RNA sequence: GGGAACGACUCGAGUAGAGUCGAAAAAGGCCCGAGGAAUCUUUAAAGAGGGAGAGUGGGCAUGGGAGGAGGACUUAAGCUAUUAGUCAUAUUUUAUUUCGAAAACUAGAUCUUAAGUAACUGUAGCAAAAUGUUAACAAUUCUUACCUUGGAAUAAAGUACGGAUUAUAUUCGUAUAAUCCGUACUAAAAGAAACAACAACAACAAC
Reactivity to 2A3 in 0.01 (KOAc 150mM, MgCl2 10mM, bicine 150mM(pH8.5), 24C), signal-to-noise 1, nucleotides 027 to 156: a000g050g000c010c040c050g000a020g050g010a080a000u110c050u100u290u220a300a190a020g030a030g000g030g000a100g030a070g030u060g000g020g000c050a060u100g030g000g000a050g030g020a010g000g000a020c010u000u030a000a000g000c000u010a050u130u080a110g010u000c010a030u030a050u090u110u080u000a050u090u060u090c000g070a030a000a000a070c000u010a010g000a050u050c030u060u000a000a000g000u010a070a000c010u030g060u100a000g000c010a080a000a110a000u090g010u100u060a060a060c030a040a040u140u040c020u050u050a060c000c060u110u170g040g000a080a010u300a040a140

This 207-nucleotide RNA was probed chemically with 2A3. Reactivities are rounded to 0.1 and cut off at 0 and 3. The 2A3 profile rests on 498 reads. It was measured as part of the RMDB library OK3TST. 2A3 adducts were read by reverse transcription with SuperScript II with manganese. Values cover nucleotides 27 to 156.